[RMDB]
RNA sequence: GGGAACGACUCGAGUAGAGUCGAAAAGCGACGGAGUCCCUCAGCGUCAGCCUAACUCUUCGAAAAGAGACCUCCAUCGCACCGCAGUGAUUCUGUGCAAUCUUGCGGCCCAAUCACGGGAGAGAACUAUACAAUGGACCUUCGGGUCCAUUGUAUAAAAAGAAACAACAACAACAAC
Reactivity to DMS in 0.01 (KOAc 150mM, MgCl2 10mM, bicine 150mM(pH8.5), 24C), signal-to-noise 4, nucleotides 027 to 126: g010c030g000a030c100g000g000a020g010u000c020c010c020u000c220a140g020c050g000u000c190a070g000c060c050u000a150a080c070u000c010u000u010c260g020a140a060a110a070g000a060g010a140c170c010u000c000c010a110u000c000g000c000a300c000c020g010c000a010g010u020g000a010u000u000c040u020g030u010g020c140a020a010u000c000u000u000g000c000g000g000c020c000c020a140a100u050c120a100c100g000g000g000a050g020a070g010a080a100c200
Reactivity to 2A3 in 0.01 (KOAc 150mM, MgCl2 10mM, bicine 150mM(pH8.5), 24C), signal-to-noise 5, nucleotides 027 to 126: g010c000g010a020c010g000g000a000g020u030c000c040c000u020c040a020g010c030g090u100c110a060g030c010c020u070a100a110c010u040c020u080u080c160g150a110a140a050a000g020a000g000a040c020c000u010c000c000a020u010c020g000c010a020c000c000g040c010a080g100u060g170a010u020u010c040u240g240u180g120c150a000a020u010c010u020u010g000c000g000g000c010c000c000a020a000u090c040a030c080g000g030g010a040g000a000g020a080a020c070

Notes:
The record gives the reactivity of an RNA of 177 nucleotides to DMS and 2A3. It was measured as part of the RMDB libraries RFM100 and RFMREP. The 2A3 profile rests on 2,714 reads. Values cover nucleotides 27 to 126. High 2A3 reactivity points to a flexible backbone, as in loops and unpaired stretches.